[RMDB]
RNA sequence: GGGAACGACUCGAGUAGAGUCGAAAAAGGCAUACCAGUAGACCUUGUCUGACUGUGUUCAUAGCCAGGCAGGGGGGACAGUGUAUGCAAGAGUUAAUUUGGAGUUCUUGCCAGCUGUAGCCAGCUGCGGUAAAUCAAAAUUCGUUUUGAUUUACCGAAAAGAAACAACAACAACAAC
Reactivity to 2A3 in 0.01 (KOAc 150mM, MgCl2 10mM, bicine 150mM(pH8.5), 24C), signal-to-noise 9, nucleotides 027 to 126: a000g130g000c010a010u010a010c000c010a010g030u040a020g080a050c000c000u010u010g010u000c000u000g010a030c010u010g010u020g070u250u230c110a050u110a030g000c000c000a000g000g000c000a000g010g000g000g000g000g010a010c030a050g040u050g010u230a010u020g010c010a020a010g050a000g030u090u190a100a150u160u110u160g110g030a130g020u030u000c010u020u030g050c020c010a000g000c000u030g020u120a050g100c050c020a010g000c000u020g020
Reactivity to DMS in 0.01 (KOAc 150mM, MgCl2 10mM, bicine 150mM(pH8.5), 24C), signal-to-noise 7, nucleotides 027 to 126: a070g010g010c010a010u010a020c000c040a220g000u000a050g010a140c000c010u000u000g010u000c000u000g010a030c000u000g010u000g010u020u020c220a040u000a020g010c010c000a010g010g000c000a020g000g000g000g010g010g010a040c030a070g020u020g010u000a010u000g010c010a060a070g000a120g000u010u010a070a100u000u000u000g010g010a270g010u000u000c020u000u000g000c240c020a030g000c010u000g000u010a120g010c300c020a020g000c020u000g010
Chemical mapping of a 177-nucleotide RNA with 2A3 and DMS. Reactivities are given for positions 27 through 126. Source: RMDB libraries RFM100 and RFMREP, as collected in RNAgym. The reactions ran in a buffer of 150 mM KOAc, 10 mM MgCl2 and 150 mM bicine (pH 8.5), at 24 C.